[RMDB]
RNA sequence: GGGAACGACUCGAGUAGAGUCGAAAAACGGUUGGUACGCCAUCCGACCAUUGGGUAGAAGCGUUCAAUCAGCACCGUGACGGUGCAGAUGGGAAAUUGCCCAUGAUACGCACCAUACGUGGUGCGAAAAAGCCAUCGGUGUUCGCACCGAUGGCAAGUGUCUACAUUCGUUCGCGAAUGUAGACACAAAAGAAACAACAACAACAAC
Reactivity to 2A3 in 0.01 (KOAc 150mM, MgCl2 10mM, bicine 150mM(pH8.5), 24C), signal-to-noise 2, nucleotides 027 to 156: a000c040g000g000u020u010g030g020u060a050c180g020c050c030a010u020c020c030g060a030c000c000a110u070u080g040g010g000u080a130g020a180a010g020c040g050u070u050c060a090a110u060c030a050g020c010a000c000c030g110u160g170a160c180g000g000u000g020c010a010g010a000u000g000g060g050a010a170a090u080u030g030c000c000c000a010u040g070a030u030a050c000g000c000a010c000c000a060u120a090c280g080u030g010g020u030g020c010g020a040a000a010a020a000g000c000c020a000u000c000g000g000u010g020u050u070c150g030c030a000c020c000g000a000u000g020g010c000a000a000
About this RNA: The record gives the reactivity of an RNA of 207 nucleotides to 2A3. Values cover nucleotides 27 to 156. The RNA was probed in 150 mM KOAc, 10 mM MgCl2 and 150 mM bicine (pH 8.5) at 24 C. The data come from the RNA Mapping Database (RMDB), library M2RFPK.